This 177-nucleotide RNA was probed chemically with 2A3 and DMS. For DMS, 1,906 sequencing reads were counted. The RNA was probed in 150 mM KOAc, 10 mM MgCl2 and 150 mM bicine (pH 8.5) at 24 C.
RNA sequence: GGGAACGACUCGAGUAGAGUCGAAAACGCCAUCGGGCAGGCGCUGGUGAUGCUGGCGCUGGCACCGCUGAUGGCGGGGAUUUCGCGCAUGGUAAGAGCCAGAAUGCACUCGCGCCGUGGGCCGGGCUCAGCCUCUCAUAUUCGUAUGAGAGGCUGAAAAAGAAACAACAACAACAAC
Reactivity to 2A3 in 0.01 (KOAc 150mM, MgCl2 10mM, bicine 150mM(pH8.5), 24C), signal-to-noise 2, nucleotides 027 to 126: c030g000c000c000a030u040c020g040g030g070c050a030g010g010c010g000c030u010g070g000u100g100a130u240g020c030u030g030g000c010g000c040u000g020g000c070a040c110c060g070c110u160g060a050u090g070g000c100g000g000g000g010a180u190u190u210c090g000c010g000c060a050u080g080g000u120a130a060g000a010g060c030c020a060g150a210a070u210g060c070a030c040u030c070g030c000g000c010c030g070u010g070g000g000c000c050g060g000g020c010
Reactivity to DMS in 0.01 (KOAc 150mM, MgCl2 10mM, bicine 150mM(pH8.5), 24C), signal-to-noise 2, nucleotides 027 to 126: c050g020c010c000a050u000c010g000g020g020c030a210g000g010c010g040c000u000g010g020u010g000a090u000g030c000u010g000g030c030g020c010u000g000g030c070a080c050c020g020c060u010g000a080u010g020g010c000g000g000g000g020a260u010u000u020c100g020c060g000c040a040u000g000g000u000a100a180g000a060g010c110c010a080g000a070a050u010g020c040a080c020u000c230g000c150g000c020c030g030u010g000g020g030c030c050g000g000g000c130
Source information:
The 2A3 profile rests on 1,347 reads.